[RMDB]
RNA sequence: GGGAACGACUCGAGUAGAGUCGAAAAGAUCGGAGACCCAACGGCACAUCCCCAUGGACUUUGGUCAUCUGUUCAACAUGUUCGACAAUGAGCCUAGUACUGCAACUGUUAAGAAUGAUCUCCGAGAUCCUUAUCUUACUUUCGAGUAAGAUAAGGAAAAAGAAACAACAACAACAAC
Reactivity to 2A3 in 0.01 (KOAc 150mM, MgCl2 10mM, bicine 150mM(pH8.5), 24C), signal-to-noise 7, nucleotides 027 to 126: g050a050u020c010g010g010a010g020a010c030c030c040a030a030c030g040g020c050a030c010a170u190c010c000c000c020a060u050g000g010a020c020u070u070u080g020g040u040c010a030u040c060u070g040u130u110c020a070a080c040a190u220g100u150u130c070g020a020c010a030a050u070g010a020g020c000c010u020a010g020u050a080c010u030g020c020a070a030c060u040g040u110u070a060a030g040a050a060u100g020a040u010c000u010c010c000g000a010g000a020
Reactivity to DMS in 0.01 (KOAc 150mM, MgCl2 10mM, bicine 150mM(pH8.5), 24C), signal-to-noise 9, nucleotides 027 to 126: g010a140u000c010g010g000a030g000a050c020c010c070a100a090c060g010g020c080a050c060a080u010c020c010c010c070a130u000g000g000a040c030u000u000u000g010g010u000c020a030u000c140u000g000u000u000c100a070a080c120a100u010g010u010u000c100g020a030c030a040a060u000g000a060g010c010c020u000a050g010u000a050c050u000g000c060a040a050c100u000g010u000u000a100a100g010a070a110u000g000a080u000c000u000c010c010g010a040g000a130
Conditions: 150 mM KOAc, 10 mM MgCl2 and 150 mM bicine (pH 8.5), 24 C. This 177-nucleotide RNA was probed chemically with 2A3 and DMS. For 2A3, 13,278 sequencing reads were counted. 2A3 is a SHAPE reagent: it acylates the 2'-hydroxyl of flexible nucleotides of all four kinds. For DMS, 26,154 sequencing reads were counted. For DMS the reverse transcriptase was MarathonRT.